[RMDB]
RNA sequence: GGGAACGACUCGAGUAGAGUCGAAAACUACCUCGGCUAGGUAAACCCCACUGGGAGCAAGGCAUUAGGGCGUACCGUCGUUUCAGACGGUAUGUCUGCACGAACGCUUGAAGGCUGCUCGCCUGAGGGUGCCUAAACCUUUCGAGGUUUAGGCACCAAAAGAAACAACAACAACAAC
Reactivity to DMS in 0.01 (KOAc 150mM, MgCl2 10mM, bicine 150mM(pH8.5), 24C), signal-to-noise 1, nucleotides 027 to 126: c000u000a000c000c090u000c070g000g030c100u050a010g020g000u000a030a040a150c040c000c000c030a300c180u000g070g030g000a020g030c000a040a090g000g030c000a190u010u000a140g000g030g030c020g050u000a010c000c050g000u000c040g030u070u180u100c230a180g000a000c000g000g000u000a000u020g000u050c000u000g000c200a130c110g000a120a190c160g000c000u010u010g000a130a210g000g020c020u000g010c010u000c030g000c000c060u030g010a040g000
Reactivity to 2A3 in 0.01 (KOAc 150mM, MgCl2 10mM, bicine 150mM(pH8.5), 24C), signal-to-noise 2, nucleotides 027 to 126: c000u020a030c000c000u050c070g050g020c070u130a010g000g020u020a010a070a130c000c000c030c010a040c050u030g000g060g010a060g040c040a050a070g040g000c020a070u040u170a080g000g010g030c000g000u000a000c010c000g020u020c010g020u050u300u160c000a030g010a010c000g000g010u000a020u000g000u000c000u000g000c010a030c010g230a210a010c050g000c000u040u050g120a050a070g110g000c020u000g000c000u010c050g110c020c030u060g000a090g050